[RMDB]
RNA sequence: GGGAACGACUCGAGUAGAGUCGAAAAGAUAUGGAAUGGCUCCCCACCACAGUCUUGAGAGCUUGGAUUUAUACGUCGGAAACGACGUAUUGUCAGCUCACAAGACUGUGAGGCCAUUCCUAAGUCACAAAGCAUUGAUGUUCGCAUCAAUGCUUUGAAAAGAAACAACAACAACAAC
Reactivity to DMS in 0.01 (KOAc 150mM, MgCl2 10mM, bicine 150mM(pH8.5), 24C), signal-to-noise 3, nucleotides 027 to 126: g020a120u010a240u000g020g000a000a010u000g000g000c000u000c290c010c000c040a300c100c000a020c000a000g040u000c000u000u000g010a070g020a000g030c000u000u000g030g020a020u010u020u010a010u000a000c000g010u020c000g010g010a100a070a300c000g010a020c000g000u000a000u000u000g000u000c000a020g000c000u000c000a120c000a030a000g010a020c000u000g040u000g000a080g010g000c000c000a010u000u000c000c010u000a010a060g000u020c120a170
Reactivity to 2A3 in 0.01 (KOAc 150mM, MgCl2 10mM, bicine 150mM(pH8.5), 24C), signal-to-noise 2, nucleotides 027 to 126: g050a110u280a170u280g000g010a010a020u000g000g000c010u190c000c070c010c000a010c020c010a010c000a000g000u000c010u020u100g040a150g020a000g050c040u200u290g110g000a010u010u300u020a040u030a000c040g000u000c020g030g050a110a090a080c020g000a000c020g010u010a000u000u010g000u010c010a030g000c020u020c000a000c020a010a010g000a000c000u010g000u000g000a000g030g000c000c000a000u000u000c000c010u010a010a020g160u080c050a020